[RMDB]
Chemical mapping of a 177-nucleotide RNA with DMS and 2A3.

RNA sequence: GGGAACGACUCGAGUAGAGUCGAAAAGAUAGUUCGUUCGCGAACUAUCAAACGCGUCGGCGAAGCAAGCGAAUAGCUGAGAAAUCAGCCGAAAACAAACAAAAAGAACGGCCUUCGGGCCGUUCAAGCAACUAAUUAUGUUCGCAUAAUUAGUUGCAAAAGAAACAACAACAACAAC
Reactivity to DMS in 0.01 (KOAc 150mM, MgCl2 10mM, bicine 150mM(pH8.5), 24C), signal-to-noise 3, nucleotides 027 to 126: g000a000u000a000g000u000u000c010g010u010u000c150g040c010g010a000a010c000u000a000u000c000a030a060a150c100g030c130g020u000c020g000g020c020g000a090a100g000c160a130a040g000c020g000a100a100u010a170g020c000u000g000a040g000a100a100a150u010c020a100g010c000c020g000a040a030a100a080c140a040a070a080c110a040a090a080a110a130g000a030a010c020g000g000c000c000u000u010c210g030g010g040c000c000g020u000u000c000a010a080
Reactivity to 2A3 in 0.01 (KOAc 150mM, MgCl2 10mM, bicine 150mM(pH8.5), 24C), signal-to-noise 3, nucleotides 027 to 126: g010a000u000a000g000u000u000c010g000u010u040c220g000c000g110a000a000c000u000a000u010c010a000a020a010c050g050c030g060u030c030g010g030c020g030a050a010g070c060a060a000g030c010g060a100a100u110a160g000c010u010g010a010g070a130a100a030u060c040a030g020c000c000g020a040a010a020a010c050a010a100a020c030a020a150a030a000a040g020a000a000c000g010g020c010c010u030u130c170g070g000g000c010c000g000u000u000c000a000a010
It was measured as part of the RMDB library M2PK50. For 2A3, 4,111 sequencing reads were counted. Reactivities are given for positions 27 through 126.